[RMDB]
RNA sequence: GGGAACGACUCGAGUAGAGUCGAAAACACCGAUGUGAUAUGGCAAGCCGCAGUUGGCAAAGGAAACGUAGGGGCCACGCUCGAACAUGAUGAUUUCAGCGUCUUCGCUGAGUCGACGCGCACGAGCAAAGCAACGAAUCUUCGGAUUCGUUGCUUUAAAAGAAACAACAACAACAAC
Reactivity to 2A3 in 0.01 (KOAc 150mM, MgCl2 10mM, bicine 150mM(pH8.5), 24C), signal-to-noise 3, nucleotides 027 to 126: c070a040c000c000g050a020u070g050u030g050a070u020a040u110g090g000c010a050a020g010c030c020g060c100a040g000u110u080g060g020c040a020a100a090g020g010a040a020a020c000g020u050a070g000g030g000g000c000c000a040c040g020c030u030c000g060a070a010c050a080u140g050a060u030g010a030u260u280u030c020a010g010c000g040u080c110u230u300c040g000c010u000g000a030g020u010c010g070a010c000g000c040g000c020a050c100g000a000g000c020
Reactivity to DMS in 0.01 (KOAc 150mM, MgCl2 10mM, bicine 150mM(pH8.5), 24C), signal-to-noise 3, nucleotides 027 to 126: c110a100c020c020g010a030u000g020u020g000a120u000a020u030g010g000c080a100a110g050c040c030g030c060a120g020u010u000g040g000c080a070a110a110g030g000a070a130a070c110g020u000a080g020g000g000g050c070c030a090c080g000c010u000c000g000a120a090c030a040u000g010a080u000g000a030u000u020u020c020a040g000c000g000u050c160u040u020c040g040c020u000g000a010g030u010c000g000a020c060g010c060g000c180a070c100g000a010g000c070